[RMDB]
Chemical mapping of a 177-nucleotide RNA with 2A3. For 2A3 the reverse transcriptase was SuperScript II with manganese. For 2A3, 3,126 sequencing reads were counted.
RNA sequence: GGGAACGACUCGAGUAGAGUCGAAAAGAUAUGGAAUCGCCAGGGAGAGUGGUGGUCGGAAACGACCACGACUCGAGGAUCUGGGAUUCCUAAGUCAAAGGGUGUUGCACUUCGGUGCAACACCCAAGUCAUAGGUUGUGUUCGCACAACCUAUGACAAAAGAAACAACAACAACAAC
Reactivity to 2A3 in 0.01 (KOAc 150mM, MgCl2 10mM, bicine 150mM(pH8.5), 24C), signal-to-noise 1, nucleotides 027 to 126: g010a000u020a000u060g010g030a010a010u030c140g160c300c000a000g000g010g000a030g000a010g010u190g100g020u010g000g000u060c010g000g040a000a010a000c010g000a020c040c000a000c000g060a010c000u000c000g010a100g000g000a010u000c020u000g000g000g010a000u010u040c000c010u000a000a000g010u020c040a100a070a130g050g000g000u010g060u010u040g000c000a010c030u080u120c300g080g000u030g000c010a000a020c020a000c030c000c010a010a000